[RMDB]
An RNA of 177 nucleotides, treated with 2A3 and DMS and read out base by base. The data come from the RNA Mapping Database (RMDB), library TTRDES. For DMS the reverse transcriptase was MarathonRT. The DMS profile rests on 6,412 reads. For 2A3, 5,594 sequencing reads were counted. The RNA was probed in 150 mM KOAc, 10 mM MgCl2 and 150 mM bicine (pH 8.5) at 24 C.
RNA sequence: GGGAACGACUCGAGUAGAGUCGAAAAAAGAUAUGGAGCUGGAACUACUCGGGGAGCAUGGCUUUGAUCUUCGCUCGGAAACGAGCGAAGGGAGCCAUGUGAAAGACGAGCCAGCUCCUAAGUCAAACUAAAUGGUUAACUUCGGUUAACCAUUUAGAAAAGAAACAACAACAACAAC
Reactivity to 2A3 in 0.01 (KOAc 150mM, MgCl2 10mM, bicine 150mM(pH8.5), 24C), signal-to-noise 2, nucleotides 027 to 126: a010a030g040a020u050a040u110g000g000a010g020c020u010g000g010a090a090c080u200a070c020u300c000g030g000g020g050a080g000c010a000u000g020g020c040u300u270u120g060a050u070c010u010u010c000g000c000u000c010g000g010a050a120a060c000g000a000g000c020g000a000a000g000g020g000a000g000c000c000a000u000g000u010g000a070a030a020g210a020c000g010a010g000c000c000a010g000c000u000c020c000u000a000a000g010u000c010a000a000a030
Reactivity to DMS in 0.01 (KOAc 150mM, MgCl2 10mM, bicine 150mM(pH8.5), 24C), signal-to-noise 4, nucleotides 027 to 126: a110a090g010a040u000a300u010g000g000a010g020c010u000g000g010a080a050c050u020a300c000u000c000g000g000g010g010a300g010c000a010u000g020g010c000u000u000u010g020a080u020c010u000u000c000g010c000u000c000g000g000a070a100a200c000g000a010g010c000g010a010a000g010g010g000a010g020c000c000a000u000g010u000g000a100a120a160g000a090c020g000a050g000c000c010a010g000c000u000c000c000u000a010a060g000u000c040a130a140a250
Values cover nucleotides 27 to 126.
Reactivities are rounded to 0.1 and cut off at 0 and 3.